An RNA of 177 nucleotides, treated with DMS and 2A3 and read out base by base. DMS adducts were read by reverse transcription with MarathonRT. Values cover nucleotides 27 to 126. The DMS profile rests on 1,707 reads.
[RMDB]
RNA sequence: GGGAACGACUCGAGUAGAGUCGAAAAGAUAUGGAUUCUGCUUUUGACGAGAGGCAAUCGGAAACGAUUGCGCUCUCGAUAAGCAGGUCCUAAGUCAAACAAAGCAAUUGUUCGCAAUUGCUUUGAAGGAAGUUCUAUUCUUCGGAAUAGAACUUCCAAAAGAAACAACAACAACAAC
Reactivity to DMS in 0.01 (KOAc 150mM, MgCl2 10mM, bicine 150mM(pH8.5), 24C), signal-to-noise 2, nucleotides 027 to 126: g000a010u000a300u000g000g000a020u000u000c000u000g000c010u000u000u000u000g010a180c070g000a010g000a020g010g010c000a000a000u000c000g010g000a130a030a140c000g020a000u000u000g010c010g020c000u020c000u000c000g020a060u010a010a020g000c000a000g000g000u010c000c010u000a030a100g010u000c020a120a130a300c000a000a020a000g000c000a010a010u000u000g010u010u030c270g040c020a010a000u010u000g020c000u000u000u000g010a060a100
Reactivity to 2A3 in 0.01 (KOAc 150mM, MgCl2 10mM, bicine 150mM(pH8.5), 24C), signal-to-noise 2, nucleotides 027 to 126: g000a010u060a020u120g080g000a010u300u150c010u000g030c000u180u050u170u160g300a280c180g000a010g010a010g000g000c000a010a010u000c000g030g020a000a050a040c010g000a010u000u010g000c020g040c010u000c010u000c010g000a000u010a000a000g000c010a000g000g000u000c000c000u000a090a010g050u010c010a030a130a110c000a020a010a000g000c000a000a010u020u000g030u050u190c300g030c170a020a020u000u000g040c000u030u010u000g020a060a010